[RMDB]
RNA sequence: GGGAACGACUCGAGUAGAGUCGAAAAGUGUGUGCAUAACAUCGCCACAGCUGGAGCUAAGCAGAGAAAGAUGUACGCAUGUGCCCUGAUGCUGUUCGUGUCAUCUUUUGUCAGGACUGGCGCACCACGAGACCAUCCUUUUCGAAGGAUGGUCUCGAAAAGAAACAACAACAACAAC
Reactivity to DMS in 0.01 (KOAc 150mM, MgCl2 10mM, bicine 150mM(pH8.5), 24C), signal-to-noise 2, nucleotides 027 to 126: g010u000g020u000g020u000g000c060a160u010a100a110c080a170u010c090g000c030c040a110c140a080g000c030u000g010g000a150g010c050u000a110a040g040c050a080g010a070g000a060a160a040g000a010u000g000u010a010c020g000c090a000u000g000u000g000c070c030c030u010g010a070u000g000c040u000g010u000u000c070g010u000g010u010c030a020u010c030u010u000u000u000g030u010c070a140g010g020a080c050u010g000g000c000g040c060a100c070c050a080
Reactivity to 2A3 in 0.01 (KOAc 150mM, MgCl2 10mM, bicine 150mM(pH8.5), 24C), signal-to-noise 2, nucleotides 027 to 126: g030u040g000u000g010u040g000c030a040u020a200a040c030a090u140c160g050c010c020a080c050a030g050c030u110g090g100a140g000c010u030a030a020g000c040a050g060a000g030a080a050a020g030a000u010g020u030a000c020g120c010a030u060g060u150g100c000c000c030u170g040a090u160g000c040u020g030u030u040c050g000u060g060u110c000a000u060c000u010u030u050u090g210u030c010a030g020g070a040c040u110g000g090c030g000c030a040c040c000a060

Annotation
Structure probing data (DMS and 2A3) for a 177-nucleotide construct. 2A3 is a SHAPE reagent: it acylates the 2'-hydroxyl of flexible nucleotides of all four kinds. For DMS the reverse transcriptase was MarathonRT. For 2A3, 1,283 sequencing reads were counted. For 2A3 the reverse transcriptase was SuperScript II with manganese. Source: RMDB library OK2TST, as collected in RNAgym. The RNA was probed in 150 mM KOAc, 10 mM MgCl2 and 150 mM bicine (pH 8.5) at 24 C.